[RMDB]
RNA sequence: GGGAACGACUCGAGUAGAGUCGAAAACCACUUGAAUUCUAAGACUCAAAGACGGGUUCAUGUGUGUAGACCUGUAUUGGACGGCAAAGAUGCGCAGCGUCGCGUGGUGCGUGAUUUACAGUAUUCCGCGUCAUUCACCAUUCGUGGUGAAUGACGCAAAAGAAACAACAACAACAAC
Reactivity to 2A3 in 0.01 (KOAc 150mM, MgCl2 10mM, bicine 150mM(pH8.5), 24C), signal-to-noise 1, nucleotides 027 to 126: c010c010a060c030u000u000g060a060a030u080u000c040u080a190a080g050a190c070u050c160a130a080a020g050a010c080g020g000g090u010u030c010a020u050g060u000g000u050g020u050a040g040a160c000c000u000g050u060a000u010u110g000g120a020c000g010g100c070a040a040a040g040a050u060g050c040g000c060a140g140c070g040u120c010g000c020g000u020g040g020u020g020c000g010u040g020a090u030u060u060a010c010a000g070u040a150u010u070c000c000
Reactivity to DMS in 0.01 (KOAc 150mM, MgCl2 10mM, bicine 150mM(pH8.5), 24C), signal-to-noise 1, nucleotides 027 to 126: c030c010a060c010u000u000g000a040a060u000u000c030u000a230a090g010a090c100u000c120a020a090a140g000a080c200g000g000g000u010u010c020a040u000g000u000g040u020g010u000a070g010a100c110c000u000g030u000a070u000u000g050g000a040c050g000g000c080a050a150a180g000a080u000g000c000g020c060a120g000c110g000u020c040g000c050g000u000g000g000u000g000c030g000u000g030a110u000u000u000a090c070a090g010u000a150u000u000c010c070